[RMDB]
Chemical mapping of a 207-nucleotide RNA with 2A3. The reactions ran in a buffer of 150 mM KOAc, 10 mM MgCl2 and 150 mM bicine (pH 8.5), at 24 C. For 2A3 the reverse transcriptase was SuperScript II with manganese.

RNA sequence: GGGAACGACUCGAGUAGAGUCGAAAACAGCAAAGAUGCAACAAUGGGCAAUCCGCAGCCAAGCUCCUACGGGCUGUCAAAGCCUAUGGAGAAGGUUCAGAGACUAAAUGGCAGUGGGCAAGCAUGGCAAUGCUUGCUUAAGAUAUAGUCCGUCCCACGGUCUGGAUGACUUCGGUCAUCCAGACCGAAAAGAAACAACAACAACAAC
Reactivity to 2A3 in 0.01 (KOAc 150mM, MgCl2 10mM, bicine 150mM(pH8.5), 24C), signal-to-noise 1, nucleotides 027 to 156: c040a020g080c010a000a020a120g060a090u100g030c010a080a110c080a220a200u120g040g030g010c010a010a030u000c000c190g050c070a000g030c020c000a050a060g000c000u000c000c010u000a040c140g000g000g000c000u020g050u160c130a150a000a000g000c000c000u050a080u050g000g000a040g010a000a000g020g030u010u120c070a030g120a100g000a190c060u160a160a100a040u120g010g020c010a040g100u090g060g000g000c000a000a000g080c000a000u050g080g000c140a180a070u050g000c000u000u000g000c000u000u050a000a000g010a000u030a010u000a140g010u030c020c000g080u000c000c000c000a010